[RMDB]
Structure probing data (2A3 and DMS) for a 207-nucleotide construct. The 2A3 profile rests on 2,133 reads. The DMS profile rests on 3,151 reads.
RNA sequence: GGGAACGACUCGAGUAGAGUCGAAAAUCUAGCGCUGAUGGUACUUGGUGGGAAACUGCCUGGGAGAGUAGGACAUAGCCAGGUGAUGUGCCGAAGUGGCGGAACUGGCAGACGCACAGGACUUAAAAUCCUGCGGGACUUACCUCUCGUACCGGUAUCAUCGAUUAUACUUCGGUAUAAUCGAUGAAAAAGAAACAACAACAACAAC
Reactivity to 2A3 in 0.01 (KOAc 150mM, MgCl2 10mM, bicine 150mM(pH8.5), 24C), signal-to-noise 2, nucleotides 027 to 156: u040c020u040a030g050c020g020c180u110g030a110u130g050g000u010a020c020u110u100g020g000u020g030g000g000a050a090a060c020u040g010c000c010u010g010g010g020a040g000a020g000u030a030g010g010a050c030a080u040a010g000c000c000a040g040g070u100g120a180u110g070u140g030c000c020g110a220a060g130u190g140g010c000g010g010a040a050c020u010g010g000c010a020g020a030c020g010c010a040c020a060g010g010a010c010u110u120a060a170a030a080u030c010c010u010g000c040g010g000g030a010c000u000u030a010c000c000u000c010u010c030g000u000a020c000c020g020g010u060a050
Reactivity to DMS in 0.01 (KOAc 150mM, MgCl2 10mM, bicine 150mM(pH8.5), 24C), signal-to-noise 2, nucleotides 027 to 156: u010c020u020a110g010c020g000c000u010g000a150u010g000g000u010a080c060u000u000g010g080u000g030g000g020a180a070a190c050u000g000c030c010u030g010g020g020a110g020a100g030u000a160g000g010a100c030a190u010a190g010c000c010a070g020g000u000g010a100u000g000u000g020c020c000g000a120a110g030u010g060g000c030g010g000a080a100c010u030g020g010c010a100g000a060c100g030c040a040c050a030g000g000a060c020u010u070a060a060a090a090u000c000c000u000g000c010g010g020g010a140c020u000u010a080c010c010u000c010u000c030g020u000a090c040c030g010g000u000a170